Description:
Conditions: 150 mM KOAc, 10 mM MgCl2 and 150 mM bicine (pH 8.5), 24 C. Chemical mapping of a 177-nucleotide RNA with DMS and 2A3. It was measured as part of the RMDB libraries RFM100 and RFMREP. Reactivities are rounded to 0.1 and cut off at 0 and 3.
RNA sequence: GGGAACGACUCGAGUAGAGUCGAAAAUGUAGCGGGGCUCAAGUACACCGCCGAAGCCGCGGCAUUCACAUAACACCCAUGCGGGUCUACGGGCCUGUGUGCAGUGGUGUGGAUGGGUAGGGGAGCGAUUCAGAAUAAACUUCGGUUUAUUCUGAAUAAAAGAAACAACAACAACAAC
Reactivity to DMS in 0.01 (KOAc 150mM, MgCl2 10mM, bicine 150mM(pH8.5), 24C), signal-to-noise 9, nucleotides 027 to 126: u030g020u010a100g010c050g010g010g010g010c040u010c100a080a110g010u020a110c140a160c060c040g000c030c030g010a130a140g010c090c080g010c040g010g010c050a050u000u010c030a020c030a040u010a080a110c020a020c020c300c000a020u000g000c010g010g010g010u000c010u010a100c200g020g000g010c000c000u000g020u000g020u000g000c260a090g020u000g000g010u000g010u000g000g000a050u000g000g000g010u020a090g000g000g000g000a080g010c120g000
Reactivity to 2A3 in 0.01 (KOAc 150mM, MgCl2 10mM, bicine 150mM(pH8.5), 24C), signal-to-noise 9, nucleotides 027 to 126: u230g020u120a020g030c020g020g000g030g010c020u040c090a050a040g060u070a060c070a050c050c030g000c000c010g120a090a020g070c090c040g040c010g010g000c010a020u030u030c020a010c010a030u100a180a050c000a010c000c010c000a000u020g000c000g010g010g000u000c010u050a160c230g050g010g000c000c000u020g000u000g000u010g010c060a030g010u010g030g020u020g010u020g010g020a040u030g010g010g040u060a100g030g010g010g010a030g040c050g020